[RMDB]
RNA sequence: GGGAACGACUCGAGUAGAGUCGAAAAUACACUGCUUUAAUACUUUUAGCUUGAUCUUUUUCCAUUAUAUGUGAGCUUAUAGUAUACAUGUUUUUAUUAGAACUUAUGAUACGACGACCGUAGUCUACGUGUUAGAAAUCUUCGGAUUUCUAACACGAAAAGAAACAACAACAACAAC
Reactivity to DMS in 0.01 (KOAc 150mM, MgCl2 10mM, bicine 150mM(pH8.5), 24C), signal-to-noise 1, nucleotides 027 to 126: u000a060c070a040c130u010g010c050u000u000u030a040a080u000a040c050u000u000u000u000a030g030c030u000u000g000a050u010c010u020u020u000u000u000c040c080a090u010u000a050u000a100u010g010u000g000a040g000c010u000u000a090u000a050g000u010a020u010a100c070a040u000g000u010u000u000u000u000a100u010u020a050g000a010a070c050u000u030a080u010g010a040u020a060c040g000a100c150g040a080c100c090g040u000a040g010u000c030u000a130
Reactivity to 2A3 in 0.01 (KOAc 150mM, MgCl2 10mM, bicine 150mM(pH8.5), 24C), signal-to-noise 2, nucleotides 027 to 126: u080a020c020a030c050u050g020c040u120u190u210a100a000u060a040c000u090u110u020u160a010g000c020u000u090g070a100u100c060u050u200u050u130u140c090c010a180u300u050a180u080a040u210g060u020g050a000g010c000u060u040a040u000a110g010u000a010u040a040c040a040u090g050u070u070u000u000u020a190u100u070a070g020a040a010c020u180u060a070u220g080a030u040a050c050g000a000c080g000a010c060c070g030u020a010g000u060c000u000a020